Conditions: 150 mM KOAc, 10 mM MgCl2 and 150 mM bicine (pH 8.5), 24 C. Chemical mapping of a 207-nucleotide RNA with DMS and 2A3. Reactivities are given for positions 27 through 156. For DMS the reverse transcriptase was MarathonRT. It was measured as part of the RMDB library RNAMAK.
[RMDB]
RNA sequence: GGGAACGACUCGAGUAGAGUCGAAAAGCGUACUACUUGAGGCACUCUGGAGAAACUCAAGGCUAAUCCCAAAUAGGAUUAGCCGACAGUUUCGUUGAAAGAGUGCUACCCACCAAGUAUCGCAAAAGCGUGUUUGGUGUUCGCACCAAACACGCAACUUAUAGUACGUGUUCGCACGUACUAUAAGAAAAGAAACAACAACAACAAC
Reactivity to DMS in 0.01 (KOAc 150mM, MgCl2 10mM, bicine 150mM(pH8.5), 24C), signal-to-noise 4, nucleotides 027 to 156: g040c020g010u000a080c070u000a020c010u000u000g000a120g020g000c000a020c000u010c010u000g020g000a190g010a010a010a020c010u000c020a050a300g010g010c000u000a010a000u010c000c000c020a090a140a230u000a040g010g010a020u000u000a010g010c000c000g010a100c200a020g010u000u000u000c010g010u000u010g010a190a160a040g000a060g020u000g020c020u000a010c020c010c020a300c110c010a030a050g000u000a020u000c020g060c020a080a060a090a180g010c010g040u000g010u000u010u000g000g040u000g020u000u010c300g000c010a020c000c000a010a010a020c000a000c000g000c010a000a020
Reactivity to 2A3 in 0.01 (KOAc 150mM, MgCl2 10mM, bicine 150mM(pH8.5), 24C), signal-to-noise 1, nucleotides 027 to 156: g010c020g050u120a110c020u000a000c000u030u000g010a030g010g010c000a000c000u010c000u000g050g010a030g000a030a010a000c010u020c060a090a030g000g010c000u000a000a000u010c010c020c080a190a220a090u300a090g000g000a000u000u000a000g000c010c000g010a000c000a010g000u000u000u000c000g010u040u020g020a010a010a000g000a000g000u010g000c010u000a000c000c000c000a030c000c020a020a000g010u010a030u300c020g000c040a040a080a030a050g000c010g000u010g010u000u000u000g020g000u020g050u040u090c280g010c040a000c010c000a000a000a000c000a000c000g000c000a000a000